[RMDB]
RNA sequence: GGGAACGACUCGAGUAGAGUCGAAAAGAUAUGGAAUCCCACGAGCUAUGAAGUACAUCGGAAACGAUGUAUGGAGCUCAGUGGUGAUUCCUAAGUCAAAAGGUUCCCGGGUUCGCCCGGGAACCAACUUGUACUACGGGUUCGCCCGUAGUACAAGAAAAGAAACAACAACAACAAC
Reactivity to 2A3 in 0.01 (KOAc 150mM, MgCl2 10mM, bicine 150mM(pH8.5), 24C), signal-to-noise 1, nucleotides 027 to 126: g010a000u020a030u180g000g020a030a000u000c030c000c010a000c000g000a020g030c000u050a160u300g030a050a000g010u010a000c010a010u000c010g000g050a090a100a010c000g000a010u000g000u000a000u000g020g000a010g030c010u000c230a030g000u000g000g040u240g040a010u000u000c000c000u000a050a060g030u000c030a060a100a120a190g000g040u010u010c080c040c000g000g050g030u170u130c300g080c000c070c110g000g000g000a000a000c000c010a000a010
Reactivity to DMS in 0.01 (KOAc 150mM, MgCl2 10mM, bicine 150mM(pH8.5), 24C), signal-to-noise 1, nucleotides 027 to 126: g000a050u000a300u010g010g000a000a010u000c010c010c000a010c010g010a000g010c010u000a300u020g010a110a290g010u000a000c000a010u000c030g000g010a130a100a190c030g030a020u000g000u000a000u000g000g000a010g030c000u000c000a040g030u020g000g000u020g000a000u000u000c000c010u000a010a160g000u000c040a080a080a230a210g000g020u000u000c000c010c000g000g030g000u000u030c260g000c000c000c020g050g000g000a030a000c010c010a000a030

Structure probing data (2A3 and DMS) for a 177-nucleotide construct. The DMS profile rests on 1,122 reads. The reactions ran in a buffer of 150 mM KOAc, 10 mM MgCl2 and 150 mM bicine (pH 8.5), at 24 C. It was measured as part of the RMDB library TTRDES. For DMS the reverse transcriptase was MarathonRT.